RNA sequence: GGGAACGACUCGAGUAGAGUCGAAAACUGGGUGGGCUAUGAUCCUAUAUGUAGGGCAGGCCAAGUCCUUGUUCCACUCCUUCUUGCAGUGGAUCUUGCCGCUUCUCUGAAAAUGAUUGAAAUGCCCACAGCACUUGCAGAGCAAGCAGAAAAGACAUCGAUACUAUUACUUCGGUAAUAGUAUCGAAAAAGAAACAACAACAACAAC
Reactivity to DMS in 0.01 (KOAc 150mM, MgCl2 10mM, bicine 150mM(pH8.5), 24C), signal-to-noise 3, nucleotides 027 to 156: c040u010g000g000g000u000g010g020g030c020u000a090u010g010a050u000c020c050u000a130u000a100u000g040u000a060g010g030g020c030a090g000g010c050c070a060a160g030u000c030c030u000u010g020u000u010c000c020a030c030u010c040c090u000u010c160u000u010g020c080a080g020u000g010g000a020u000c030u010u000g040c040c040g020c020u000u010c010u000c000u000g000a060a050a060a080u010g010a110u010u000g020a060a080a110u000g000c020c010c000a060c040a090g010c020a000c030u000u010g040c020a110g010a130g010c040a030a060g020c010a120g000a060a070a100a110g000a130c070a190
Reactivity to 2A3 in 0.01 (KOAc 150mM, MgCl2 10mM, bicine 150mM(pH8.5), 24C), signal-to-noise 5, nucleotides 027 to 156: c030u030g010g030g020u010g010g000g010c000u000a060u080g000a020u030c030c060u100a070u050a070u290g160u190a040g030g010g010c090a120g050g000c090c020a030a000g020u040c070c000u070u160g060u100u010c000c000a010c020u050c030c040u150u290c050u090u180g030c070a010g000u010g010g020a030u010c010u010u020g020c010c030g030c040u300u100c020u010c000u000g020a080a060a100a100u110g010a010u010u050g020a010a020a040u050g010c000c010c000a000c000a000g000c020a030c010u020u060g000c020a030g040a020g200c010a010a000g000c010a010g170a110a100a030a010g070a020c050a070
The record gives the reactivity of an RNA of 207 nucleotides to DMS and 2A3. Conditions: 150 mM KOAc, 10 mM MgCl2 and 150 mM bicine (pH 8.5), 24 C. 2A3 adducts were read by reverse transcription with SuperScript II with manganese. Reactivities are given for positions 27 through 156. The data come from the RNA Mapping Database (RMDB), library OK3TST.